Notes: Structure probing data (DMS and 2A3) for a 177-nucleotide construct. For DMS the reverse transcriptase was MarathonRT. The RNA was probed in 150 mM KOAc, 10 mM MgCl2 and 150 mM bicine (pH 8.5) at 24 C.
RNA sequence: GGGAACGACUCGAGUAGAGUCGAAAAGCUACAGUGUCUGACGGAAAGAGCGUGGUUAAUCCGCGAGGGUGAAAGCUGGCGCUGCCGCGUUCCGCUCAGCGAGAUUCCUGAGCCUCAGGAAGCGUGCGCCCGCGUAAGUAUUCGUACUUACGCGGGCAAAAGAAACAACAACAACAAC
Reactivity to DMS in 0.01 (KOAc 150mM, MgCl2 10mM, bicine 150mM(pH8.5), 24C), signal-to-noise 2, nucleotides 027 to 126: g000c050u000a120c060a100g030u000g010u030c010u000g010a040c050g000g020a040a170a090g010a120g020c020g030u010g000g040u000u000a090a050u000c110c040g000c120g000a110g040g020g030u000g030a060a070a210g000c030u000g020g000c100g020c130u000g030c020c010g010c020g000u010u000c000c010g010c140u010c010a060g020c010g000a100g000a120u000u000c020c010u000g010a110g000c100c130u010c060a040g010g000a030a040g010c060g010u010g040c120
Reactivity to 2A3 in 0.01 (KOAc 150mM, MgCl2 10mM, bicine 150mM(pH8.5), 24C), signal-to-noise 1, nucleotides 027 to 126: g020c040u070a070c010a080g070u020g040u080c000u000g040a050c030g060g130a040a100a060g160a030g020c030g020u030g020g020u050u170a080a050u070c040c000g000c080g100a080g030g090g010u070g040a160a010a010g030c000u090g060g080c050g020c100u040g020c030c020g040c000g000u020u010c010c030g000c040u020c000a030g000c000g020a060g010a090u090u010c010c020u000g050a050g080c070c040u080c010a030g000g000a040a060g060c020g000u100g000c010